RNA sequence: GGGAACGACUCGAGUAGAGUCGAAAAGCCCAUAUGUUCGCAUAUGGGCAAAAGCAGAUCUGAGCAUGCGAGCUCUCUGCGACAAAAGUCAACGCAUUAAAAAAACACGUCACUUCGGUGACGUGAAGAACGGUAAAAAGUUCGCUUUUUACCGUUCAAAAGAAACAACAACAACAAC
Reactivity to 2A3 in 0.01 (KOAc 150mM, MgCl2 10mM, bicine 150mM(pH8.5), 24C), signal-to-noise 5, nucleotides 027 to 126: g000c000c010c010a000u010a000u000g010u010u060c200g000c120a000u010a000u020g000g000g000c030a040a050a000a000g000c010a000g010a030u080c090u230g000a010g020c020a030u110g060c050g090a050g020c000u010c010u000c000u010g000c000g020a010c040a010a160a010a020g130u140c050a090a100c040g010c040a050u140u300a010a100a030a030a000a020a050c000a000c000g000u000c000a000c000u030u030c140g030g010u000g000a000c010g000u000g000a000a010
Reactivity to DMS in 0.01 (KOAc 150mM, MgCl2 10mM, bicine 150mM(pH8.5), 24C), signal-to-noise 4, nucleotides 027 to 126: g020c000c000c010a010u000a000u010g010u000u010c180g020c000a000u010a000u000g000g020g000c000a010a020a040a110g000c000a020g040a090u020c220u000g010a010g020c010a110u000g030c050g000a200g000c010u000c010u000c010u010g010c000g010a130c240a040a060a110a110g010u020c100a040a090c050g020c030a080u020u010a010a000a060a080a090a070a230c010a010c000g010u000c000a010c000u000u010c160g010g000u000g020a010c000g010u010g000a040a070